Source information:
Structure probing data (DMS and 2A3) for a 177-nucleotide construct. For 2A3 the reverse transcriptase was SuperScript II with manganese.
RNA sequence: GGGAACGACUCGAGUAGAGUCGAAAAAGCUGCUUAUAACUUGAGCACUGCGUCAAUUUAUAAUUGGCUUAAUCGUGGCUGGCUCCCCUUCAAAUUGACUGAUCUACCCAAUCGGAAUGUCCGCCAGAGGCAUACGCAUAUUCGUAUGCGUAUGCCUAAAAGAAACAACAACAACAAC
Reactivity to DMS in 0.01 (KOAc 150mM, MgCl2 10mM, bicine 150mM(pH8.5), 24C), signal-to-noise 2, nucleotides 027 to 126: a000g000c010u000g010c220u000u010a000u010a030a010c140u000u000g010a080g020c000a150c270u020g030c060g010u000c000a000a000u000u000u000a000u000a010a020u010u000g000g010c000u000u010a060a140u000c120g030u000g020g000c020u000g000g000c030u000c020c020c000c080u000u000c080a040a100a120u000u000g010a140c050u000g000a030u010c030u000a130c030c010c010a110a030u000c070g000g000a130a060u000g030u000c000c060g000c090c040a110g010
Reactivity to 2A3 in 0.01 (KOAc 150mM, MgCl2 10mM, bicine 150mM(pH8.5), 24C), signal-to-noise 1, nucleotides 027 to 126: a030g010c010u000g000c010u010u000a000u000a010a000c020u000u010g000a030g050c020a150c300u160g010c080g300u000c020a000a000u020u020u000a020u010a040a050u030u020g000g000c000u010u060a050a010u110c100g040u100g030g000c030u010g000g000c010u090c070c050c000c050u080u090c070a120a140a080u060u110g060a040c040u050g000a060u000c000u070a100c010c020c080a020a060u020c000g000g100a060a090u080g000u030c010c000g000c000c000a030g020

The data come from the RNA Mapping Database (RMDB), library OK2TRN. The reactions ran in a buffer of 150 mM KOAc, 10 mM MgCl2 and 150 mM bicine (pH 8.5), at 24 C.